[RMDB]
An RNA of 177 nucleotides, treated with DMS and read out base by base. It was measured as part of the RMDB library OK2TST. The reactions ran in a buffer of 150 mM KOAc, 10 mM MgCl2 and 150 mM bicine (pH 8.5), at 24 C. For DMS the reverse transcriptase was MarathonRT.
RNA sequence: GGGAACGACUCGAGUAGAGUCGAAAAACGUUGGCGAAGCUGAUGGGCCCAAUCGGCCGGUACUGGCGGCGGCGGGGCCACGUCCGCGCACGGGAGCGUGACGCCGAACUCCAAGCCGAGGCCAAGGACCAUAGACACCCUUCGGGGUGUCUAUGGUAAAAGAAACAACAACAACAAC
Reactivity to DMS in 0.01 (KOAc 150mM, MgCl2 10mM, bicine 150mM(pH8.5), 24C), signal-to-noise 1, nucleotides 027 to 126: a100c090g000u000u000g010g000c030g000a160a220g000c010u010g000a060u000g000g040g040c010c010c020a200a040u000c050g000g020c010c000g010g030u000a040c180u000g000g000c130g010g010c040g000g000c160g030g000g020g040c120c020a040c020g000u000c000c020g030c050g020c210a080c070g000g010g000a060g010c000g010u000g020a170c010g000c000c010g000a090a110c010u010c040c000a060a170g020c020c010g010a170g010g000c030c020a030a060g000g000